[RMDB]
RNA sequence: GGGAACGACUCGAGUAGAGUCGAAAACUUGCCGAAGCCCGAAGCCUUACUCCAUUACGUGAGCGGACAUUGAUGGCGUUGAUAUCACUGUCUUGCCCCGAAGCCUCAACCUGUGUCGGCCGUUGGAGGUCCCAGCCUGGGCGAGGGGACGGCGGGCUACAGCUACAUUUUUCGAAAUGUAGCUGUAAAAAGAAACAACAACAACAAC
Reactivity to 2A3 in 0.01 (KOAc 150mM, MgCl2 10mM, bicine 150mM(pH8.5), 24C), signal-to-noise 2, nucleotides 027 to 156: c040u030u110g030c030c010g110a050a010g030c000c030c010g030a040a010g030c000c000u050u140a030c000u020c020c010a160u230u250a110c130g080u250g040a000g000c050g030g000a010c020a010u000u050g000a000u030g070g160c110g110u050u150g050a040u040a000u080c010a010c000u020g020u010c000u050u220g000c000c010c000c000g100a120a000g000c000c010u130c060a040a080c020c000u030g010u020g080u290c110g020g030c010c010g040u120u230g250g040a150g040g030u010c000c000c000a030g000c000c030u080g000g000g000c010g010a020g000g000g000g000a000c040g000g000c000g000g000g000c000
Reactivity to DMS in 0.01 (KOAc 150mM, MgCl2 10mM, bicine 150mM(pH8.5), 24C), signal-to-noise 2, nucleotides 027 to 156: c050u000u000g020c000c030g000a090a130g000c010c000c010g010a090a100g010c020c010u000u010a030c020u000c020c050a200u000u010a120c140g000u000g040a060g000c020g040g010a030c010a060u000u000g010a050u000g040g030c010g000u010u030g020a200u000a060u000c020a040c050u000g000u000c020u010u010g030c010c010c000c030g020a080a240g010c030c000u000c050a050a100c100c000u000g010u050g010u010c050g000g030c010c030g010u000u030g010g020a080g000g000u000c000c030c000a080g000c080c060u000g010g000g040c050g000a120g020g000g020g000a020c040g010g000c030g050g030g030c030